[RMDB]
RNA sequence: GGGAACGACUCGAGUAGAGUCGAAAAACUUUGAUGGCGGUACUAUGAAUUGAUGCAAGGUGUGGAGCGACCUUAAACAGUUCUGGUGGUGAUCUGAAUGGAGUGCUCUACUGAGAUUAUAAAAUAGCAUGCAUAGAGUGCUUCGGCACUCUAUGAACGUAUUUAAGGUCUUCGGACCUUAAAUACGAAAAGAAACAACAACAACAAC
Reactivity to DMS in 0.01 (KOAc 150mM, MgCl2 10mM, bicine 150mM(pH8.5), 24C), signal-to-noise 2, nucleotides 027 to 156: a080c050u020u000u000g010a120u010g030g020c030g000g000u000a030c020u000a050u030g020a110a100u000u010g000a100u020g010c060a050a040g000g030u000g030u000g000g000a110g010c070g000a080c020c030u000u000a070a070a130c070a100g030u000u000c020u030g030g000u000g030g020u000g010a080u020c020u000g020a110a130u000g000g000a070g010u000g020c040u000c020u000a060c050u000g010a070g010a150u000u010a090u000a030a050a050a110u000a080g010c080a040u000g000c000a020u000a010g010a050g040u010g010c010u000u010c300g060g000c010a020c010u010c010u000a000u000g010a010a140
Reactivity to 2A3 in 0.01 (KOAc 150mM, MgCl2 10mM, bicine 150mM(pH8.5), 24C), signal-to-noise 7, nucleotides 027 to 156: a000c050u110u070u090g050a050u070g020g010c020g020g030u040a040c040u070a080u140g060a070a050u130u050g040a050u080g080c040a040a020g020g000u040g020u060g030g020a030g020c010g020a030c010c000u060u070a070a130a040c030a060g010u050u020c020u030g040g000u020g010g010u030g020a050u040c030u040g050a070a040u070g030g020a040g020u070g010c010u020c010u030a030c020u050g020a010g020a100u090u100a070u180a110a080a050a040u120a030g050c060a030u110g010c000a000u010a000g000a000g000u000g010c000u020u020c050g050g000c000a000c000u000c000u000a000u000g000a000a000
Chemical mapping of a 207-nucleotide RNA with DMS and 2A3. Source: RMDB library M2RFPK, as collected in RNAgym. The reactions ran in a buffer of 150 mM KOAc, 10 mM MgCl2 and 150 mM bicine (pH 8.5), at 24 C. For DMS, 3,773 sequencing reads were counted.